Background
The data come from the RNA Mapping Database (RMDB), libraries RFM100 and RFMREP. The record gives the reactivity of an RNA of 177 nucleotides to DMS and 2A3. DMS adducts were read by reverse transcription with MarathonRT. For 2A3 the reverse transcriptase was SuperScript II with manganese. The 2A3 profile rests on 1,205 reads.
RNA sequence: GGGAACGACUCGAGUAGAGUCGAAAACGCUAAGGAGUGUGUAACAACUCACGGGCCGAAUGAACUAGCCCUGAAAAUGGAUGGCGCUCAAGCGUGCUACCCAUACCUCGCCGUCGGGGUAGAAACGAAAGGUUGGCAAAUUCGUUUGCCAACCUUUAAAAGAAACAACAACAACAAC
Reactivity to DMS in 0.01 (KOAc 150mM, MgCl2 10mM, bicine 150mM(pH8.5), 24C), signal-to-noise 3, nucleotides 027 to 126: c020g000c000u000a060a130g000g020a010g020u050g000u000g010u000a110a260c050a030a060c100u040c020a070c190g050g000g020c000c110g000a120a090u040g020a090a210c270u050a140g000c030c020c000u000g010a020a000a090a140u000g000g000a100u070g010g000c030g010c000u030c000a080a010g010c020g000u000g010c170u000a060c000c000c010a120u000a020c010c000u000c070g020c230c110g010u000c030g000g020g010g030u000a010g000a050a020a060c260g000
Reactivity to 2A3 in 0.01 (KOAc 150mM, MgCl2 10mM, bicine 150mM(pH8.5), 24C), signal-to-noise 2, nucleotides 027 to 126: c000g000c000u080a030a040g210g000a000g010u000g000u010g060u170a130a000c000a000a090c000u000c000a000c090g000g000g000c020c020g160a180a300u230g090a070a090c070u110a100g010c000c000c000u020g000a050a000a080a150u040g000g080a060u060g080g000c000g030c000u000c000a010a000g000c000g000u000g030c010u050a020c000c000c000a000u000a030c000c000u020c000g100c130c030g300u300c040g000g010g000g000u000a020g020a030a040a000c110g010